[RMDB]
RNA sequence: GGGAACGACUCGAGUAGAGUCGAAAAAUCGUUUUCUUCGGAAAACGAUAAUUAUCCUAAGUCCAUUGAGGGACAUGUUUAAACAUCGGAAACGAUGUGAACAACAGCCUCCCCACCAAUGGAUAUGGAAGCGUGUCAUGCCGUUCGCGGCAUGAAAGAUAACGGCAACAUUCGUGUUGCCGUUAUCAAAAGAAACAACAACAACAAC
Reactivity to DMS in 0.01 (KOAc 150mM, MgCl2 10mM, bicine 150mM(pH8.5), 24C), signal-to-noise 2, nucleotides 027 to 156: a090u010c000g030u000u000u000u000c000u000u000c300g070g020a020a010a000a020c000g000a000u000a010a060u000u000a130u000c020c000u020a110a170g020u010c010c010a060u010u000g020a120g000g000g000a020c130a050u000g000u000u000u000a200a220a020c000a000u000c010g040g010a210a190a170c000g030a010u000g000u000g000a170a170c040a050a000c000a020g050c130c050u000c020c000c040c020a180c190c030a000a020u000g030g010a040u000a290u000g030g020a110a130g020c090g030u000g040u000c010a040u000g040c010c000g000u010u010c300g020c000g010g050c000a010u000g000a030a060a140
Reactivity to 2A3 in 0.01 (KOAc 150mM, MgCl2 10mM, bicine 150mM(pH8.5), 24C), signal-to-noise 2, nucleotides 027 to 156: a000u000c000g030u000u010u000u000c010u010u050c300g100g000a000a010a000a000c000g010a010u010a030a020u140u110a070u020c000c000u030a160a050g020u000c000c000a020u000u000g010a050g000g020g000a020c000a060u010g020u020u000u010a060a050a010c000a000u000c010g050g010a080a040a010c030g010a000u000g040u010g010a050a020c070a000a000c000a010g030c010c030u000c000c000c000c040a200c010c000a000a010u000g000g030a010u010a030u040g020g040a110a030g180c090g120u210g090u100c020a020u080g000c010c000g020u040u060c300g010c000g140g000c020a020u080g000a010a000a080

Structure probing data (DMS and 2A3) for a 207-nucleotide construct. The RNA was probed in 150 mM KOAc, 10 mM MgCl2 and 150 mM bicine (pH 8.5) at 24 C. The DMS profile rests on 3,049 reads. It was measured as part of the RMDB library RNAMAK.